[RMDB]
RNA sequence: GGGAACGACUCGAGUAGAGUCGAAAAAUCACUUAGGUCUCAAAGUAACCUCUUGAGUUGAUACUGUUAUCUCCUGGGGCUCAGCGUGGUCAAGGAGCUUGCCCACUGUCACACAACCAGUAUGAAGGGACUAUGCUAAUUUCGAUUAGCAUAGUCCAAAAGAAACAACAACAACAAC
Reactivity to 2A3 in 0.01 (KOAc 150mM, MgCl2 10mM, bicine 150mM(pH8.5), 24C), signal-to-noise 3, nucleotides 027 to 126: a000u070c030a040c050u050u080a040g040g030u040c010u000c000a170a200a040g030u050a050a090c020c000u060c000u080u100g040a030g050u070u080g080a030u060a120c050u050g060u220u090a040u060c020u000c010c010u020g040g040g060g000c010u010c040a040g050c070g070u080g020g030u040c020a020a050g060g000a030g030c040u040u050g040c020c030c010a020c020u030g040u080c020a020c000a000c000a080a080c040c010a060g040u070a070u200g100a080a090g090
Reactivity to DMS in 0.01 (KOAc 150mM, MgCl2 10mM, bicine 150mM(pH8.5), 24C), signal-to-noise 4, nucleotides 027 to 126: a100u010c060a070c070u000u010a070g010g020u000c020u000c070a060a070a090g020u010a090a090c060c040u000c070u000u010g000a070g020u000u010g010a060u000a050c090u010g000u000u010a080u000c040u010c040c020u000g010g000g010g010c080u000c060a080g010c130g020u000g000g020u010c040a070a100g000g000a110g020c100u000u000g000c030c010c010a060c060u000g000u010c080a080c130a090c070a060a070c080c030a040g020u000a070u010g020a110a180g010
An RNA of 177 nucleotides, treated with 2A3 and DMS and read out base by base. For 2A3 the reverse transcriptase was SuperScript II with manganese. It was measured as part of the RMDB library OK2TST.